[RMDB]
RNA sequence: GGGAACGACUCGAGUAGAGUCGAAAAAGAGACUGAAACAGGAAUGAUGCAGGGAAUCCUGCACUUCACCUCAAGCCUCUUGCACUCUUGUGUUCAGAGUUUCUACAAGAGCUACUUCAUGACAAAGCUCAAGGAGGGAAUACGAGGAAAGAGCAUAAGGUGGAUAUUAGUUCGCUAAUAUCCACCUAAAAGAAACAACAACAACAAC
Reactivity to DMS in 0.01 (KOAc 150mM, MgCl2 10mM, bicine 150mM(pH8.5), 24C), signal-to-noise 2, nucleotides 027 to 156: a000g040a030g060a050c000u000g020a060a090a160c050a120g000g000a150a090u000g030a100u000g020c000a020g000g000g030a240a150u000c010c000u020g000c010a010c000u000u000c100a240c000c000u010c020a090a080g020c020c000u040c000u020u010g050c080a100c040u000c020u000u060g000u000g010u000u000c070a100g020a170g030u000u020u000c000u000a040c040a020a080g000a020g020c040u000a080c060u000u000c050a080u000g000a150c040a080a130a090g010c030u000c020a070a070g030g000a080g000g030g020a090a130u020a050c050g010a170g000g000a090a060a090g000a080g020c010a090u000a100
Reactivity to 2A3 in 0.01 (KOAc 150mM, MgCl2 10mM, bicine 150mM(pH8.5), 24C), signal-to-noise 4, nucleotides 027 to 156: a010g030a000g010a010c040u090g030a040a150a020c060a040g030g040a040a060u090g220a110u010g020c000a010g070g020g050a120a140u250c010c010u010g000c000a000c000u030u010c050a090c030c020u040c040a070a050g010c030c000u020c000u020u060g030c050a030c030u040c000u020u050g010u020g020u080u020c030a040g030a060g220u020u060u040c030u050a010c010a090a010g000a000g050c010u080a090c030u070u120c050a090u120g060a070c050a110a170a010g000c010u030c040a010a020g060g000a050g020g020g010a040a040u080a070c040g000a020g020g020a040a090a030g040a010g030c050a020u110a140